RNA sequence: GGGAACGACUCGAGUAGAGUCGAAAAAGCGGCCCUCGAGAUCCAGCAGGCGCUCCCGGCGCUCAACAGGCGGUAUGAGUCGAAGGGUUGGCCGUCCAUACGUAUAGGUAUAGGGAUACAUACCGGGUAACCCGAAAGUAUUCGUACUUUCGGGUUAAAAAGAAACAACAACAACAAC
Reactivity to 2A3 in 0.01 (KOAc 150mM, MgCl2 10mM, bicine 150mM(pH8.5), 24C), signal-to-noise 1, nucleotides 027 to 126: a000g000c000g020g000c010c030c020u000c010g050a030g010a060u030c020c060a020g010c040a030g040g000c010g000c010u090c020c020c010g100g010c000g030c030u110c020a010a130c040a120g120g060c050g030g000u190a070u160g060a060g090u040c050g050a120a110g060g000g000u020u020g130g010c000c000g000u030c000c010a040u060a030c050g170u180a040u090a300g100g050u060a050u070a110g090g070g010a020u030a150c100a030u110a040c000c000g030g030g020
Reactivity to DMS in 0.01 (KOAc 150mM, MgCl2 10mM, bicine 150mM(pH8.5), 24C), signal-to-noise 4, nucleotides 027 to 126: a130g000c040g010g000c010c000c060u010c040g000a110g010a080u000c040c060a110g010c120a130g010g020c020g000c090u010c030c060c030g020g000c030g000c020u000c080a080a100c150a110g010g010c030g010g000u010a060u000g000a200g010u000c020g000a090a110g010g000g010u000u000g020g030c020c030g020u010c010c030a060u010a030c090g000u010a100u010a060g020g000u010a040u000a110g000g000g000a130u000a070c080a070u000a050c010c010g000g010g000